[RMDB]
RNA sequence: GGGAACGACUCGAGUAGAGUCGAAAACUCGUUUCGUUGGAUGAAGUCGGCGACGUAAUGGCAUUCGAUCGGGUUCUCGAUACCCGCCAGCACCUCGCAGCGACCGUUAUUCAGUAGCUGGCAAUGCUGGCACUCCGCACCGCCAACACUGGCAAUGUAAACAUCACAAAUUCGUUUGUGAUGUUUAAAAAGAAACAACAACAACAAC
Reactivity to 2A3 in 0.01 (KOAc 150mM, MgCl2 10mM, bicine 150mM(pH8.5), 24C), signal-to-noise 4, nucleotides 027 to 156: c020u000c010g010u020u030u010c040g020u020u040g050g070a060u050g060a080a000g060u030c010g030g020c020g000a050c030g060u110a090a170u110g040g020c070a050u120u090c060g080a140u070c040g010g000g000u070u030c060u020c100g010a010u060a150c000c000c000g000c000c020a010g000c020a020c010c040u060c030g060c050a040g070c020g040a040c030c020g040u100u050a090u150u050c020a020g020u020a010g020c000u010g060g030c050a070a090u130g000c000u010g000g010c020a030c010u010c020c000g070c040a080c040c020g020c020c010a110a070c080a040c190u020g010g000c010a000a020u090g020
Reactivity to DMS in 0.01 (KOAc 150mM, MgCl2 10mM, bicine 150mM(pH8.5), 24C), signal-to-noise 3, nucleotides 027 to 156: c020u000c020g000u000u000u000c120g010u020u000g020g020a060u020g010a070a110g010u000c040g010g010c030g020a070c060g020u000a060a110u000g010g040c020a210u010u010c060g020a070u000c020g030g030g010u000u000c090u000c120g000a100u000a030c020c020c050g000c010c010a030g000c040a030c030c030u010c100g040c030a090g010c000g000a030c010c030g000u000u000a080u000u000c030a060g000u000a070g020c010u000g030g020c040a120a060u020g020c000u000g000g010c030a090c070u010c050c050g030c030a050c080c040g010c010c010a030a050c060a070c060u010g000g050c050a000a060u010g010
The data come from the RNA Mapping Database (RMDB), library OK3TST. This 207-nucleotide RNA was probed chemically with 2A3 and DMS. For DMS, 8,235 sequencing reads were counted. For 2A3, 2,290 sequencing reads were counted.